An RNA of 177 nucleotides, treated with DMS and 2A3 and read out base by base. For DMS, 6,967 sequencing reads were counted. 2A3 adducts were read by reverse transcription with SuperScript II with manganese.
[RMDB]
RNA sequence: GGGAACGACUCGAGUAGAGUCGAAAAGAUGCCAUUUAUAAAAAUCGAAAGUUUUGUGGUGGAGGAUAUUGCAACUGGAGUUCAGACCGUGCAUGCCAAGUGGAAGGACUUUAAUUUUGAGAAGCUAACAGAGAUAGGGAUUCGUCCCUAUCUCUGUAAAAGAAACAACAACAACAAC
Reactivity to DMS in 0.01 (KOAc 150mM, MgCl2 10mM, bicine 150mM(pH8.5), 24C), signal-to-noise 4, nucleotides 027 to 126: g020a140u030g000c020c020a120u040u020u040a100u020a060a010a040a050a080u020c080g000a050a110a090g010u010u000u010u000g010u020g010g010u020g010g010a060g000g010a070u030a030u010u020g010c060a090a080c090u020g020g000a070g000u010u010c120a120g000a080c060c060g020u000g000c080a040u010g000c050c050a030a060g000u020g000g010a100a050g000g000a070c090u000u010u030a050a110u010u000u010u020g010a110g030a060a110g000c030u000a090
Reactivity to 2A3 in 0.01 (KOAc 150mM, MgCl2 10mM, bicine 150mM(pH8.5), 24C), signal-to-noise 3, nucleotides 027 to 126: g080a030u130g050c010c020a040u020u120u030a280u220a070a080a010a000a000u180c080g040a030a100a090g030u020u020u130u160g130u040g020g070u030g060g070a060g020g000a020u100a050u160u050g030c040a060a140c020u030g020g010a020g000u180u060c000a030g040a060c010c020g030u050g000c000a000u040g030c000c000a110a020g030u070g000g030a000a050g010g000a000c000u090u110u150a080a110u130u090u150u040g220a160g000a060a060g060c050u020a030
The RNA was probed in 150 mM KOAc, 10 mM MgCl2 and 150 mM bicine (pH 8.5) at 24 C.
The 2A3 profile rests on 825 reads.